An RNA of 177 nucleotides, treated with DMS and 2A3 and read out base by base. 2A3 adducts were read by reverse transcription with SuperScript II with manganese. For DMS, 1,064 sequencing reads were counted. The 2A3 profile rests on 2,337 reads. It was measured as part of the RMDB library OK1LIB.
RNA sequence: GGGAACGACUCGAGUAGAGUCGAAAACAACGUUCUUAGAAACCAAUUAAUUUUUCAACUGGACUUACCCGAAUACUCUUGCGAGCAUCCUCAUUCGGGAUUUGUUCGUCAUUUUAUACCUAUUAACCGAAAAUACCAUCUUCGGAUGGUAUUUUCGAAAAGAAACAACAACAACAAC
Reactivity to DMS in 0.01 (KOAc 150mM, MgCl2 10mM, bicine 150mM(pH8.5), 24C), signal-to-noise 1, nucleotides 027 to 126: c110a160a260c130g000u020u000c000u000u000a030g000a220a020a210c130c090a030a010u070u030a000a030u000u070u000u090u030c190a040a190c190u000g000g000a090c010u030u000a030c010c000c000g020a020a060u050a080c080u000c000u070u050g020c140g000a050g000c180a040u020c010c000u030c130a100u080u000c060g000g000g060a040u010u000u020g000u000u000c000g040u000c130a000u030u000u030u010a060u080a070c010c000u030a020u000u080a090a060c190
Reactivity to 2A3 in 0.01 (KOAc 150mM, MgCl2 10mM, bicine 150mM(pH8.5), 24C), signal-to-noise 4, nucleotides 027 to 126: c040a040a080c040g030u070u010c050u080u070a060g120a110a090a040c030c030a030a090u160u150a090a120u100u120u050u100u110c030a100a090c110u110g010g000a000c000u010u040a100c000c020c000g010a030a010u040a040c020u030c010u130u120g090c120g010a000g020c030a040u090c020c080u080c080a110u110u080c010g010g000g050a020u070u030u060g030u000u000c010g030u000c040a030u040u000u030u090a070u030a050c020c030u070a090u250u140a180a030c040